[RMDB]
RNA sequence: GGGAACGACUCGAGUAGAGUCGAAAAGAGGAGCUGCUGUCGAACAAUGGCCCAGUGCUUUGGAAGUGAUUAUGUACUCGGCAAGGCGAAACCCUCAGAUGGGGAACGAUGGAACCUUCUCGAGCGCCUAGUCCUAAAUGUUCGCAUUUAGGACUAGAAAAGAAACAACAACAACAAC
Reactivity to DMS in 0.01 (KOAc 150mM, MgCl2 10mM, bicine 150mM(pH8.5), 24C), signal-to-noise 6, nucleotides 027 to 126: g010a090g010g000a080g020c060u000g000c040u000g020u010c040g010a100a110c130a110a090u000g010g020c010c020c050a070g020u010g010c020u000u000u010g020g010a180a070g010u010g010a080u000u010a060u010g010u010a070c030u000c140g020g000c100a050a060g010g010c050g010a090a080a160c050c020c010u010c090a120g000a120u010g000g010g000g010a070a100c110g010a060u000g000g010a100a060c100c000u000u000c020u000c030g010a070g010c120g000c100
Reactivity to 2A3 in 0.01 (KOAc 150mM, MgCl2 10mM, bicine 150mM(pH8.5), 24C), signal-to-noise 4, nucleotides 027 to 126: g050a030g000g020a040g000c020u080g030c020u020g080u040c020g030a090a020c040a080a120u120g090g000c000c020c010a020g020u040g040c030u060u060u100g070g050a100a100g070u060g130a050u030u170a070u190g080u060a040c020u000c010g010g000c040a030a030g050g010c040g050a080a050a060c020c020c000u050c040a100g050a220u230g000g000g020g010a040a070c050g000a020u050g020g060a010a050c000c000u020u010c010u010c020g040a030g050c040g050c010

This 177-nucleotide RNA was probed chemically with DMS and 2A3. 2A3 adducts were read by reverse transcription with SuperScript II with manganese. For DMS the reverse transcriptase was MarathonRT. The RNA was probed in 150 mM KOAc, 10 mM MgCl2 and 150 mM bicine (pH 8.5) at 24 C.